[RMDB]
RNA sequence: GGGAACGACUCGAGUAGAGUCGAAAAGAUAUGGACUGAGAACUACACUGCCAAGCCGUUGAAAUCGGAAACGAUGGAGGCUUGGCAGUGCUCAGUCCUAAGUCAAACACGUAGUUCGCUACGUGAACUCUCCUAAGAGGUUCGCCUCUUAGGAGAGAAAAGAAACAACAACAACAAC
Reactivity to DMS in 0.01 (KOAc 150mM, MgCl2 10mM, bicine 150mM(pH8.5), 24C), signal-to-noise 3, nucleotides 027 to 126: g010a040u010a300u000g000g000a020c000u000g000a010g000a070a030c060u020a300c010a010c000u000g000c000c000a010a000g000c000c000g020u000u010g010a170a100a020u000c000g000g000a060a080a120c000g010a020u000g000g020a070g000g010c000u000u000g000g020c010a010g000u000g000c000u000c000a000g000u000c000c000u000a000a030g020u000c040a160a120a200c010a000c000g010u000a010g000u000u000c240g000c000u000a020c000g000u000g000a080a180
Reactivity to 2A3 in 0.01 (KOAc 150mM, MgCl2 10mM, bicine 150mM(pH8.5), 24C), signal-to-noise 2, nucleotides 027 to 126: g040a050u080a060u160g020g000a010c000u030g030a010g010a050a010c060u180a030c270a010c010u010g000c000c000a030a000g010c000c000g260u300u060g010a050a040a000u040c020g050g000a100a080a050c000g000a010u030g000g030a020g000g020c000u020u000g000g000c000a000g000u000g010c000u000c000a010g000u010c010c000u020a010a010g000u020c000a000a060a080c010a000c000g020u000a000g050u020u050c300g000c210u010a010c000g000u000g010a010a010
Record summary:
Structure probing data (DMS and 2A3) for a 177-nucleotide construct. Conditions: 150 mM KOAc, 10 mM MgCl2 and 150 mM bicine (pH 8.5), 24 C. The data come from the RNA Mapping Database (RMDB), library TTRDEL. For DMS the reverse transcriptase was MarathonRT. 2A3 is a SHAPE reagent: it acylates the 2'-hydroxyl of flexible nucleotides of all four kinds.